Structure probing data (2A3 and DMS) for a 207-nucleotide construct. For 2A3, 2,370 sequencing reads were counted. It was measured as part of the RMDB library OK3TST. The RNA was probed in 150 mM KOAc, 10 mM MgCl2 and 150 mM bicine (pH 8.5) at 24 C.
[RMDB]
RNA sequence: GGGAACGACUCGAGUAGAGUCGAAAAGAGGAUGGAGAGAAAGCAAGCUGGGCAGUUAGUAAAUCUUGCGUACCUCCCAUGCGACAGGCAGUAUUCUAGACAUUUUGUUCAUAUUUUGUCUUACAACUCUCAGAAAAACUCUAUUUUAGAGGUGAUGCGAUCAUACAGGAUUCGUCCUGUAUGAUCGAAAAGAAACAACAACAACAAC
Reactivity to 2A3 in 0.01 (KOAc 150mM, MgCl2 10mM, bicine 150mM(pH8.5), 24C), signal-to-noise 4, nucleotides 027 to 156: g070a010g060g010a050u070g010g000a050g010a020g000a110a070a000g020c020a000a020g010c010u040g020g060g000c030a050g030u090u160a010g000u050a030a080a100u050c040u020u050g010c020g030u020a010c010c000u010c000c000c010a010u070g010c030g050a050c020a030g040g010c010a020g010u070a100u110u090c120u080a050g020a040c010a030u020u080u060u140g090u110u110c100a070u060a080u170u080u060u050g020u000c000u000u030a020c000a090a050c020u030c010u030c050a010g120a050a050a020a010a020c020u020c050u020a130u070u210u070u120a040g000a020g000g040u040g020a050u100g020
Reactivity to DMS in 0.01 (KOAc 150mM, MgCl2 10mM, bicine 150mM(pH8.5), 24C), signal-to-noise 2, nucleotides 027 to 156: g030a090g040g030a120u010g010g010a090g020a100g030a130a070a180g000c020a130a100g020c100u010g010g040g020c070a070g020u010u000a130g020u000a110a130a140u000c020u000u000g020c040g030u000a110c060c010u000c010c020c020a250u000g010c050g010a050c050a090g000g030c040a050g010u000a070u010u010c100u010a060g010a020c010a100u000u000u010u010g010u000u000c110a060u000a100u000u010u000u000g000u000c020u000u040a090c070a050a110c050u000c020u010c020a160g000a060a030a090a050a040c000u010c000u000a120u000u000u000u000a040g030a030g020g010u000g010a100u010g010